[RMDB]
Structure probing data (2A3 and DMS) for a 170-nucleotide construct. For DMS the reverse transcriptase was MarathonRT. For 2A3, 1,057 sequencing reads were counted. 2A3 is a SHAPE reagent: it acylates the 2'-hydroxyl of flexible nucleotides of all four kinds.
RNA sequence: GGGAACGACUCGAGUAGAGUCGAAAAAUUGUUGACUCUGUGCAGUAUGCUCAUAAACAUGACAUACAAAUUACUAAUGAGAGCUACAAUAAUUAUGUACCCUCAUAUGUUAAACCUGAUAGUGUGUAAAGGCGUUCGUUCGCGAACGCCAAAAGAAACAACAACAACAAC
Reactivity to 2A3 in 0.01 (KOAc 150mM, MgCl2 10mM, bicine 150mM(pH8.5), 24C), signal-to-noise 1, nucleotides 027 to 129: a000u100u100g000u000u060g010a060c000u000c120u080g000u000g040c010a020g010u000a000u000g040c000u000c000a000u010a040a300a050c100a020u010g000a000c000a140u010a010c000a000a050a000u220u040a060c030u040a000a000u090g060a060g000a030g000c060u040a010c000a000a150u040a040a000u220u120a130u080g040u010a000c000c000c000u000c000a050u010a000u060g080u170u230a020a020a000c000c000u060g000a000u020a100g030u040g000u000g000u160a080a000a000
Reactivity to DMS in 0.01 (KOAc 150mM, MgCl2 10mM, bicine 150mM(pH8.5), 24C), signal-to-noise 1, nucleotides 027 to 129: a070u000u000g170u000u000g040a120c000u010c000u000g080u040g030c220a280g000u000a000u000g170c180u000c010a000u000a000a060a240c180a130u000g000a010c000a000u000a000c030a010a070a130u100u020a030c010u000a140a040u020g030a050g000a060g100c250u000a000c010a000a080u000a080a000u010u010a110u030g000u000a090c040c000c010u000c100a030u040a140u000g050u000u000a070a100a150c120c060u000g010a090u080a110g010u000g000u060g000u040a080a140a170